[RMDB]
RNA sequence: GGGAACGACUCGAGUAGAGUCGAAAAGAUAUGGAUCGGUCCUCGAGUAACUAUGAAGUCGGAAACGAUGGAGUUACCGAGGAGCCGAUCCUAAGUCAAAAUCGGAAUAGCUUCGGCUAUUCCGAAAGUAGCAUAAUGGCUUCGGCCAUUAUGCUACAAAAGAAACAACAACAACAAC
Reactivity to 2A3 in 0.01 (KOAc 150mM, MgCl2 10mM, bicine 150mM(pH8.5), 24C), signal-to-noise 1, nucleotides 027 to 126: g010a000u040a050u200g000g010a010u000c000g000g030u020c010c010u010c000g140a250g090u010a010a000c000u010a160u300g030a070a020g010u010c010g030g040a110a050a040c020g020a010u060g000g030a020g020u010u010a000c020c030g000a000g000g000a000g000c000c000g020a000u010c010c000u000a010a000g000u010c010a020a060a020a260u020c000g020g000a000a000u020a010g030c010u050u050c300g110g000c020u010a010u000u000c000c010g000a010a000a000
Reactivity to DMS in 0.01 (KOAc 150mM, MgCl2 10mM, bicine 150mM(pH8.5), 24C), signal-to-noise 1, nucleotides 027 to 126: g030a090u000a300u010g010g020a000u010c000g020g000u000c000c020u000c010g000a150g020u000a000a020c020u000a300u000g020a090a210g010u000c010g020g000a110a100a180c000g000a000u000g020g020a030g010u000u000a000c010c000g000a000g000g010a020g000c000c000g010a000u000c020c000u010a000a070g000u000c020a070a060a160a130u000c010g000g000a010a020u000a010g000c000u000u000c260g010g000c000u000a010u000u000c000c000g020a000a030a080

Chemical mapping of a 177-nucleotide RNA with 2A3 and DMS. The DMS profile rests on 779 reads. Values cover nucleotides 27 to 126. The 2A3 profile rests on 1,287 reads.